[RMDB]
RNA sequence: GGGAACGACUCGAGUAGAGUCGAAAAGCGACCGGUAGUCAGUAUGCUGCACACUAGUGCUGAAGUGCCUCUGGUGAUUGCAAGAGUACUUCCAGCUAGCCCAGCCUGGUAUGCAUUGGAGCAAGGAUGAGUGCGAUCCUGCUGGGCGAGGGGUGGACAUGAUUUAAAGUUUCGACUUUAAAUCAUGAAAAGAAACAACAACAACAAC
Reactivity to 2A3 in 0.01 (KOAc 150mM, MgCl2 10mM, bicine 150mM(pH8.5), 24C), signal-to-noise 8, nucleotides 027 to 156: g050c030g050a040c030c020g040g040u060a050g040u040c050a010g020u020a040u110g040c030u040g010c030a010c010a010c040u050a020g050u030g080c050u060g080a120a050g040u050g060c020c030u040c010u010g050g020u050g060a190u070u180g020c040a080a020g020a010g070u040a030c000u020u010c030c000a020g040c030u030a020g000c000c000c000a000g010c010c070u050g000g000u090a090u200g000c030a010u020u110g100g050a080g050c080a090a060g110g030a090u230g040a030g030u010g010c010g010a040u120c000c000u010g000c000u000g000g020g000c010g000a060g000g020g000g040u030g010g010a020
Reactivity to DMS in 0.01 (KOAc 150mM, MgCl2 10mM, bicine 150mM(pH8.5), 24C), signal-to-noise 2, nucleotides 027 to 156: g010c020g010a070c060c030g040g020u010a100g030u010c020a060g010u000a040u000g040c040u000g000c030a080c030a090c050u010a050g030u000g020c030u010g000a080a070g020u000g000c060c020u000c010u020g020g040u000g000a120u010u000g020c020a070a060g000a110g030u010a040c030u000u000c020c030a090g020c030u000a110g000c020c000c020a050g010c000c030u000g030g020u010a110u010g010c040a070u000u010g020g010a190g000c030a130a080g010g030a130u010g000a090g010u000g010c020g000a100u000c020c020u000g010c020u000g010g020g010c010g010a050g000g000g010g030u000g000g010a280

This 207-nucleotide RNA was probed chemically with 2A3 and DMS. In probing experiments dimethyl sulfate is read out at A N1 and C N3, which are open when not base-paired. For 2A3, 10,431 sequencing reads were counted. The RNA was probed in 150 mM KOAc, 10 mM MgCl2 and 150 mM bicine (pH 8.5) at 24 C. DMS adducts were read by reverse transcription with MarathonRT.